[RMDB]
RNA sequence: GGGAACGACUCGAGUAGAGUCGAAAACCCACGACUUUCGAGUCGUGGGAAAUAUAAUCAGCGGUAAAUAAUUAGCACCGCUUACCGCUGAAGCGGAGCAUACACGUCUAGGAUUCGUCCUAGACAAGCGCAUACAUAUCUUCGGAUAUGUAUGCGCAAAAGAAACAACAACAACAAC
Reactivity to DMS in 0.01 (KOAc 150mM, MgCl2 10mM, bicine 150mM(pH8.5), 24C), signal-to-noise 1, nucleotides 027 to 126: c000c000c030a000c020g010a030c000u020u000u000c160g000a000g020u000c000g060u000g000g010g000a000a000a030u000a130u000a160a140u040c030a030g020c030g010g030u000a010a030a020u030a000a060u010u000a090g030c090a040c030c000g020c030u000u000a070c030c000g000c010u000g000a090a070g050c020g020g030a100g070c050a180u110a170c130a100c190g010u010c000u000a020g010g000a050u000u060c250g010u000c000c030u000a010g000a000c000a020a050
Reactivity to 2A3 in 0.01 (KOAc 150mM, MgCl2 10mM, bicine 150mM(pH8.5), 24C), signal-to-noise 2, nucleotides 027 to 126: c000c000c000a000c000g000a000c000u060u110u190c220g060a000g000u000c020g020u000g000g000g000a000a090a000u220a020u020a060a130u040c000a000g030c010g170g100u140a040a080a090u140a050a100u120u120a040g040c020a020c120c000g000c050u000u020a110c000c000g000c010u020g000a010a000g030c000g010g050a030g000c020a030u000a200c070a000c130g000u040c020u000a000g010g000a000u020u060c150g030u000c060c000u000a010g000a000c000a000a000